Record summary
An RNA of 177 nucleotides, treated with 2A3 and DMS and read out base by base. Values cover nucleotides 27 to 126. For DMS the reverse transcriptase was MarathonRT. High 2A3 reactivity points to a flexible backbone, as in loops and unpaired stretches. The reactions ran in a buffer of 150 mM KOAc, 10 mM MgCl2 and 150 mM bicine (pH 8.5), at 24 C. The data come from the RNA Mapping Database (RMDB), library OK2TRN.

[RMDB]
RNA sequence: GGGAACGACUCGAGUAGAGUCGAAAAGAUUGGGCGUACCGGGACCAUCGUCGCCAUCGAAUACAUUCUUGAGAAGAUCGCCGAGAACAAGCCGUGCCCUCCGAUGCCUGAGCUUGUGAAGGCACUACUAAAUAUUAAUGUUCGCAUUAAUAUUUAGAAAAGAAACAACAACAACAAC
Reactivity to 2A3 in 0.01 (KOAc 150mM, MgCl2 10mM, bicine 150mM(pH8.5), 24C), signal-to-noise 7, nucleotides 027 to 126: g050a040u130u160g040g020g000c020g000u050a060c050c030g030g020g020a030c040c020a080u080c040g130u110c020g020c020c000a030u080c040g070a040a030u070a110c040a090u070u030c010u060u180g050a120g030a140a050g040a090u140c080g000c020c020g060a040g030a050a010c020a020a000g000c020c010g040u060g010c010c010c000u070c040c050g060a090u100g000c000c020u060g020a040g020c020u030u020g010u030g040a030a020g000g000c000a000c000u020a020
Reactivity to DMS in 0.01 (KOAc 150mM, MgCl2 10mM, bicine 150mM(pH8.5), 24C), signal-to-noise 9, nucleotides 027 to 126: g010a090u000u010g010g010g010c040g020u010a070c110c060g000g000g010a150c080c070a060u000c060g010u010c040g010c020c030a070u000c080g000a090a080u010a100c130a090u000u000c030u000u000g010a140g000a110a090g000a080u000c120g030c020c010g000a130g020a180a040c060a040a040g010c020c030g010u000g000c010c030c040u010c090c110g000a090u010g000c020c030u000g000a140g010c030u000u000g010u000g010a150a190g000g010c020a060c080u000a130